Background:
Conditions: 150 mM KOAc, 10 mM MgCl2 and 150 mM bicine (pH 8.5), 24 C. Chemical mapping of a 177-nucleotide RNA with 2A3 and DMS. The 2A3 profile rests on 3,423 reads. For 2A3 the reverse transcriptase was SuperScript II with manganese.
[RMDB]
RNA sequence: GGGAACGACUCGAGUAGAGUCGAAAAGAUAUGGACCCACAGUGGACAUGCUGGGUCGGAAACGAUUAGCAACAGCCACGUGGGUCCUAAGUCAAAAGUCGAUGUUCACUUCGGUGAACAUCGACAAGGACGAUAUGUCGUUCGCGACAUAUCGUCCAAAAGAAACAACAACAACAAC
Reactivity to 2A3 in 0.01 (KOAc 150mM, MgCl2 10mM, bicine 150mM(pH8.5), 24C), signal-to-noise 1, nucleotides 027 to 126: g000a000u050a020u080g000g000a000c010c020c010a000c010a030g000u010g000g060a170c020a110u000g040c000u200g100g200g050u020c000g000g000a020a020a000c000g000a010u070u080a000g010c010a010a110c070a140g120c000c000a010c010g000u010g000g010g010u040c000c000u000a000a010g000u000c000a020a030a000a040g000u000c000g000a010u000g000u020u000c010a010c020u070u120c300g110g010u000g020a000a000c000a000u000c000g010a010c030a000a000
Reactivity to DMS in 0.01 (KOAc 150mM, MgCl2 10mM, bicine 150mM(pH8.5), 24C), signal-to-noise 1, nucleotides 027 to 126: g000a050u000a160u010g020g020a020c000c000c000a020c020a120g080u000g000g000a230c070a160u000g000c030u000g040g000g010u010c000g010g000a040a020a060c000g020a020u000u000a090g010c010a000a050c290a210g000c020c010a000c010g000u010g000g010g000u000c000c000u000a000a080g000u000c010a070a100a110a080g030u000c000g000a010u000g050u000u000c000a010c000u000u010c170g010g030u000g030a000a000c000a000u000c000g000a000c020a000a030